[RMDB]
The record gives the reactivity of an RNA of 177 nucleotides to DMS and 2A3.
For DMS, 896 sequencing reads were counted.
The RNA was probed in 150 mM KOAc, 10 mM MgCl2 and 150 mM bicine (pH 8.5) at 24 C.
For DMS the reverse transcriptase was MarathonRT.
RNA sequence: GGGAACGACUCGAGUAGAGUCGAAAAUAAUUCUAGAGCUUAUACAUGCAAUUAAAACAUAAACCUUAUGGGACAUGUGCUUUUAUUAGGCUAAAACCAAGUGAUCGCAAGAUCGUUAUAUUGGUUGGCAUGUACCUAAGUUCGCUUAGGUACAUGCAAAAGAAACAACAACAACAAC
Reactivity to DMS in 0.01 (KOAc 150mM, MgCl2 10mM, bicine 150mM(pH8.5), 24C), signal-to-noise 1, nucleotides 027 to 126: u040a040a220u020u000c010u020a150g010a110g010c000u000u000a030u000a060c120a060u000g020c010a040a110u030u000a060a060a140a110c050a030u010a060a140a270c060c040u000u000a060u000g040g000g020a130c150a030u000g000u000g000c040u000u000u000u030a040u010u000a070g020g000c100u010a070a070a010a020c000c000a000a010g000u000g010a000u000c030g010c300a040a110g010a010u000c000g010u010u030a060u000a100u010u010g000g000u000u010g000
Reactivity to 2A3 in 0.01 (KOAc 150mM, MgCl2 10mM, bicine 150mM(pH8.5), 24C), signal-to-noise 2, nucleotides 027 to 126: u000a010a090u070u000c030u060a070g010a010g190c010u000u110a010u020a070c040a070u060g030c030a070a160u230u090a130a140a010a000c040a010u040a060a240a000c010c000u070u100a070u230g030g030g010a010c040a020u070g040u040g020c040u080u080u070u080a080u120u060a070g010g000c020u040a060a120a000a120c000c000a000a010g060u030g030a000u000c000g030c010a040a000g000a000u010c000g020u110u000a070u030a030u110u040g030g060u030u000g040